[RMDB]
The record gives the reactivity of an RNA of 177 nucleotides to DMS.
The DMS profile rests on 5,201 reads.
RNA sequence: GGGAACGACUCGAGUAGAGUCGAAAAGAUAUGGACGCGAUAAGUACGACCGACAACAGCCUCUAAUUUUCUCGGAAACGAGAAAAUUAGAGGACAUGUCGCAAGUACUUUUGACGCGUCCUAAGUCGAUAAUGGAAGGGUUCGCCCUUCCAUUAUCAAAAGAAACAACAACAACAAC
Reactivity to DMS in 0.01 (KOAc 150mM, MgCl2 10mM, bicine 150mM(pH8.5), 24C), signal-to-noise 6, nucleotides 027 to 126: g010a110u000a300u010g010g000a010c000g040c000g020a200u000a010a010g020u000a010c000g000a300c300c010g000a010c000a030a050c300a170g000c000c000u000c000u000a010a000u000u000u000u000c010u000c000g010g010a070a120a190c000g020a030g000a000a000a010a000u000u000a000g000a010g010g010a000c060a090u010g010u000c000g010c030a020a280g010u000a000c000u000u000u000u000g020a130c060g000c010g000u000c000c000u000a000a070g020u020c090